[RMDB]
This 177-nucleotide RNA was probed chemically with 2A3 and DMS. The DMS profile rests on 3,537 reads. The data come from the RNA Mapping Database (RMDB), library OK2TRN.
RNA sequence: GGGAACGACUCGAGUAGAGUCGAAAAGUCUGCGAAGUGGAGGGGCUCCAGGCGGACAUCGGAGCAGCAUUAGUUGAAACCCCGCGCGGUCACGUAAGGAUAAUACCUCAAGCAAAUGACCGUAUGAUAUAUUGUGCAUGUUCGCAUGCACAAUAUAAAAAGAAACAACAACAACAAC
Reactivity to 2A3 in 0.01 (KOAc 150mM, MgCl2 10mM, bicine 150mM(pH8.5), 24C), signal-to-noise 1, nucleotides 027 to 126: g000u030c000u010g010c030g090a120a010g060u000g050g040a030g030g010g040g000c000u000c020c020a040g000g030c000g030g030a020c000a090u080c070g030g000a010g000c010a000g000c020a050u080u040a090g040u060u180g080a110a050a060c000c000c020c010g020c030g010c000g000g000u020c000a000c040g020u030a040a050g000g030a030u060a100a020u090a170c000c030u030c050a070a040g050c000a110a070a040u070g000a010c000c010g030u020a160u090g060a030
Reactivity to DMS in 0.01 (KOAc 150mM, MgCl2 10mM, bicine 150mM(pH8.5), 24C), signal-to-noise 4, nucleotides 027 to 126: g000u010c020u010g010c020g000a110a140g010u010g000g010a090g010g000g000g010c020u010c020c050a080g020g010c070g000g000a070c070a050u000c070g000g010a100g020c040a060g010c060a080u000u010a110g010u010u000g000a080a100a140c060c010c000c060g030c140g010c010g010g000u000c010a050c080g000u010a070a030g010g000a090u020a100a140u020a150c010c000u010c100a130a170g000c190a040a080a110u010g000a010c000c000g000u000a050u000g000a160